Structure probing data (2A3) for a 177-nucleotide construct. Conditions: 150 mM KOAc, 10 mM MgCl2 and 150 mM bicine (pH 8.5), 24 C. It was measured as part of the RMDB library OK1LIB. For 2A3, 677 sequencing reads were counted.
RNA sequence: GGGAACGACUCGAGUAGAGUCGAAAAGUCGUAUCGUAAACGAAGUAGACCACGUCAAUCGCGUAGUCUAUGACAUUACAUCAAAACCACCAAGCACAAUUGAGUGGGAAUAAUUAUAUAUAAUAAACUUCACUUCCCUUUUCGAAGGGAAGUGAAGAAAAGAAACAACAACAACAAC
Reactivity to 2A3 in 0.01 (KOAc 150mM, MgCl2 10mM, bicine 150mM(pH8.5), 24C), signal-to-noise 2, nucleotides 027 to 126: g030u060c010g040u120a080u190c050g030u000a020a020a140c060g040a050a020g010u000a010g000a000c010c020a010c000g060u080c050a140a290u180c190g000c010g000u040a040g030u000c000u000a030u020g000a020c000a040u030u050a010c020a040u130c100a010a070a000a050c000c000a010c000c000a060a000g130c070a160c140a300a220u100u010g020a050g030u020g030g010g080a020a050u110a120a000u160u230a110u000a020u050a000u100a190a160u040a170a140a000